[RMDB]
RNA sequence: GGGAACGACUCGAGUAGAGUCGAAAAGAAGAACAGUGCGUCACACUGUUGACGAAAACAAACUGUGUUUGCUGUGAUCGACAGCACGAUCAGGAUAGCACACAACUAUCAAACAAAAAGAAAGAAAGGGUUUCAUAGAGUUCGCUCUAUGAAACCCAAAAGAAACAACAACAACAAC
Reactivity to DMS in 0.01 (KOAc 150mM, MgCl2 10mM, bicine 150mM(pH8.5), 24C), signal-to-noise 1, nucleotides 027 to 126: g040a090a080g000a240a050c000a040g010u000g000c070g020u000c020a230c000a300c100u050g000u110u000g000a100c090g040a090a100a050a010c170a000a040a090c060u000g070u000g000u000u000u000g000c010u000g000u000g000a000u110c050g010a130c090a020g000c040a000c110g000a210u120c100a110g020g000a020u000a000g090c070a050c250a010c300a090a040c070u000a050u000c040a010a020a110c300a000a000a090a080a060g010a170a030a060g000a090a090a070
Reactivity to 2A3 in 0.01 (KOAc 150mM, MgCl2 10mM, bicine 150mM(pH8.5), 24C), signal-to-noise 2, nucleotides 027 to 126: g150a090a000g000a020a000c030a000g000u010g030c070g080u000c000a000c070a000c080u140g000u110u000g040a050c020g050a050a010a000a070c150a180a100a030c000u040g010u050g000u010u060u050g040c000u000g000u100g080a300u210c020g020a020c010a050g030c050a020c000g000a030u050c020a030g180g000a030u050a030g000c010a020c000a030c040a060a200c040u020a020u150c040a000a120a130c210a000a090a000a000a050g180a060a260a000g040a040a070a000